The data come from the RNA Mapping Database (RMDB), library 15KREP. An RNA of 177 nucleotides, treated with 2A3 and DMS and read out base by base. The reactions ran in a buffer of 150 mM KOAc, 10 mM MgCl2 and 150 mM bicine (pH 8.5), at 24 C. For 2A3, 4,625 sequencing reads were counted. Reactivities are rounded to 0.1 and cut off at 0 and 3.

[RMDB]
RNA sequence: GGGAACGACUCGAGUAGAGUCGAAAACAAUUGGCUUAUAGCUCUAGUGCAAAUGGCAGCCUGGUUGGCACAACUUUGCAGGGCAAGCCUAUUGGUAUGUUCUUCCCUUAUGACAUCGAACUUGUCACCCUAUUCUACUCUUCGGAGUAGAAUAGGGAAAAGAAACAACAACAACAAC
Reactivity to 2A3 in 0.01 (KOAc 150mM, MgCl2 10mM, bicine 150mM(pH8.5), 24C), signal-to-noise 3, nucleotides 027 to 126: c010a000a010u010u020g000g000c010u020u070a030u120a280g000c000u010c030u060a110g240u030g060c010a000a020a040u060g020g030c040a020g000c010c020u190g300g060u160u220g040g000c000a010c000a060a100c030u000u000u020g020c010a010g000g000g000c000a010a000g000c000c000u000a010u000u010g010g000u090a080u130g090u020u040c020u040u030c010c000c010u040u090a150u040g010a010c000a010u040c120g060a070a090c040u030u030g000u000c010a040
Reactivity to DMS in 0.01 (KOAc 150mM, MgCl2 10mM, bicine 150mM(pH8.5), 24C), signal-to-noise 2, nucleotides 027 to 126: c010a020a010u000u000g000g010c000u000u000a160u000a270g010c000u000c000u020a120g020u010g000c000a000a010a030u000g010g010c200a180g030c020c020u000g020g000u000u000g040g020c010a110c140a110a100c150u000u010u000g000c000a070g000g010g000c000a050a010g000c010c000u000a030u000u000g000g030u020a050u000g000u000u010c080u000u000c000c010c020u000u010a110u000g000a010c010a020u010c190g000a030a110c110u000u000g000u010c010a160